This 177-nucleotide RNA was probed chemically with 2A3 and DMS. For 2A3 the reverse transcriptase was SuperScript II with manganese. The 2A3 profile rests on 2,216 reads. DMS (dimethyl sulfate) methylates the pairing face of unpaired adenines and cytosines.

RNA sequence: GGGAACGACUCGAGUAGAGUCGAAAAUGAAAUAGCGUGUGCAAGACGCUGAUCUUGCCAUGAUCUGGAACUUUAGUGCUGAGGUCCGAGUUCCAGGCUAUCAUGUCGGACCUUAGCACUAAUUAAAUCCAAAUUACCAGUUCGCUGGUAAUUUGGAAAAAGAAACAACAACAACAAC
Reactivity to 2A3 in 0.01 (KOAc 150mM, MgCl2 10mM, bicine 150mM(pH8.5), 24C), signal-to-noise 2, nucleotides 027 to 126: u170g040a050a030a000u140a030g060c010g010u010g110u120g000c010a000a000g060a010c070g080c300u090g030a300u000c010u010u010g010c010c000a000u030g020a110u030c020u040g000g050a030a060c000u000u040u020a010g000u010g020c000u000g010a000g000g010u010c000c010g010a040g060u110u100c020c000a000g020g000c010u080a120u300c040a060u110g070u060c020g000g000a010c000c000u000u000a000g000c000a000c010u000a010a000u010u050a010a010a010
Reactivity to DMS in 0.01 (KOAc 150mM, MgCl2 10mM, bicine 150mM(pH8.5), 24C), signal-to-noise 3, nucleotides 027 to 126: u000g000a100a080a110u010a060g000c000g020u000g010u010g010c010a010a020g000a010c010g030c250u020g010a110u000c000u000u000g000c010c010a020u000g000a060u010c040u000g010g010a110a130c100u000u000u000a000g010u000g020c000u000g010a010g010g020u000c000c010g000a070g020u010u000c100c060a060g020g010c130u000a030u010c100a070u000g000u000c000g000g000a020c000c000u000u000a000g000c000a010c000u000a000a000u000u000a040a080a090